[RMDB]
RNA sequence: GGGAACGACUCGAGUAGAGUCGAAAAUGUAACUACGCGCGGUGCUGCAUGCAAUCAACACUGGUUGUACAAUUGCAGUACGUAUUGAUUGCGGCCAUAGUGCUGACGCUAUGUGUACACGGCGCACCAAUUAACGUGUAUCACAUGCAUGAUGUGCUAUCUUACUUCAGUUCGCUGAAGUAAGAUAAAAAGAAACAACAACAACAAC
Reactivity to 2A3 in 0.01 (KOAc 150mM, MgCl2 10mM, bicine 150mM(pH8.5), 24C), signal-to-noise 9, nucleotides 027 to 156: u150g010u040a070a040c050u070a050c120g020c000g000c020g040g010u020g010c000u010g000c010a040u060g000c000a000a010u010c010a040a090c070a050c210u090g030g080u110u040g040u100a080c130a170a230u160u130g020c020a010g010u040a020c030g010u020a070u020u120g070a080u030u080g000c000g010g000c020c010a130u120a050g020u040g030c050u040g060a070c020g000c040u080a020u020g040u020g000u010a010c020a010c020g110g000c110g000c060a110c070c070a080a080u200u150a170a030c010g000u010g000u010a040u260c030a010c010a020u040g020c030a050u130g050a060u120g060u040g020c010
Reactivity to DMS in 0.01 (KOAc 150mM, MgCl2 10mM, bicine 150mM(pH8.5), 24C), signal-to-noise 4, nucleotides 027 to 156: u010g030u000a070a150c050u000a030c040g010c010g030c040g040g030u000g030c000u010g050c020a090u000g020c010a040a030u000c010a030a090c080a080c150u010g030g040u010u000g010u000a050c060a080a170u000u010g030c020a030g030u000a050c050g040u000a040u000u010g000a050u000u000g020c010g010g010c030c090a110u000a030g030u000g020c020u010g020a130c090g020c030u000a040u000g030u000g030u000a020c030a040c020g000g010c100g000c110a170c050c070a060a120u000u010a070a060c000g000u000g010u000a020u010c040a040c030a040u000g030c090a090u010g000a130u000g020u000g030c040